[RMDB]
RNA sequence: GGGAACGACUCGAGUAGAGUCGAAAACAGCUCCUGGUUCAGUGACAGGCACACAGUAGGGGACACUCAACAAUGUUUGUUGGAUGAAUAAAUGUAUGGGUUGCCCUCCACAUUACCUGUCUCUCUCUGUAAUAUGAAAAUCACUUGUAGGCCAGGCACAACGUAUAAGCUUCGGCUUAUACGUUGUAAAAGAAACAACAACAACAAC
Reactivity to 2A3 in 0.01 (KOAc 150mM, MgCl2 10mM, bicine 150mM(pH8.5), 24C), signal-to-noise 6, nucleotides 027 to 156: c040a020g040c060u060c030c000u020g000g040u130u180c080a010g000u000g050a010c010a060g030g120c100a030c000a000c020a060g110u160a020g010g000g000g020a030c000a000c030u040c010a000a060c020a080a160u230g080u110u080u050g060u050u140g080g040a130u110g040a100a070u110a120a070a020u080g020u090a190u090g010g010g030u070u160g060c000c010c000u010c010c000a060c000a030u060u150a030c000c000u000g000u000c010u000c000u000c010u000c000u010g100u070a070a100u120a140u210g140a090a040a020a020u090c030a020c080u060u090g070u080a040g030g010c000c000a000g000g000c020
Reactivity to DMS in 0.01 (KOAc 150mM, MgCl2 10mM, bicine 150mM(pH8.5), 24C), signal-to-noise 3, nucleotides 027 to 156: c080a100g000c040u000c000c020u010g020g030u000u000c040a070g010u000g020a020c040a030g020g000c030a090c100a100c070a180g040u010a080g030g010g000g020a100c010a050c020u000c000a030a050c030a060a140u000g000u000u000u000g050u000u010g010g000a200u000g000a060a040u000a020a040a070u000g020u000a300u000g000g000g000u010u010g000c030c000c010u010c010c030a020c040a100u000u000a040c010c030u000g010u000c020u000c020u000c040u000c020u000g030u010a100a070u020a100u000g010a080a100a070a100u000c060a050c050u000u000g040u000a100g010g020c020c000a020g010g020c180